[RMDB]
This 177-nucleotide RNA was probed chemically with 2A3 and DMS. The reactions ran in a buffer of 150 mM KOAc, 10 mM MgCl2 and 150 mM bicine (pH 8.5), at 24 C. It was measured as part of the RMDB libraries RFM100 and RFMREP.
RNA sequence: GGGAACGACUCGAGUAGAGUCGAAAAGGGGCAUCACCCGGUCGGCGCGGUCGCGGCGCGCCGAGGGCCCGACGCCUGGCGGAGAAUCAGGGUUCGACUCCGGAGAGCGGGCCUGCGAGACGGCCCGAUCGAGAAAUGCUUUCGAGCAUUUCUCGAUAAAAGAAACAACAACAACAAC
Reactivity to 2A3 in 0.01 (KOAc 150mM, MgCl2 10mM, bicine 150mM(pH8.5), 24C), signal-to-noise 4, nucleotides 027 to 126: g030g000g000g010c040a080u060c040a110c010c010c000g020g060u040c010g020g000c010g000c020g020g070u110c030g000c050g100g060c000g000c000g000c000c000g000a020g000g010g000c010c010c000g000a030c030g050c010c010u040g030g060c020g010g090a060g040a100a120u120c060a060g010g060g050u080u080c030g030a040c010u000c020c000g000g040a080g000a010g040c000g000g000g000c010c000u020g020c030g020a050g010a020c060g030g000c000c010c000g000
Reactivity to DMS in 0.01 (KOAc 150mM, MgCl2 10mM, bicine 150mM(pH8.5), 24C), signal-to-noise 4, nucleotides 027 to 126: g010g000g000g010c040a140u010c070a190c020c030c010g000g010u010c000g010g000c010g020c020g000g020u030c090g010c070g000g010c000g010c020g000c020c020g000a070g010g010g020c040c040c020g020a070c060g020c130c020u020g000g010c050g010g000a140g010a110a060u020c060a080g000g000g000u000u010c060g000a170c040u000c010c020g000g000a160g000a130g000c010g000g000g010c010c000u010g000c190g000a130g010a100c100g000g010c000c000c000g010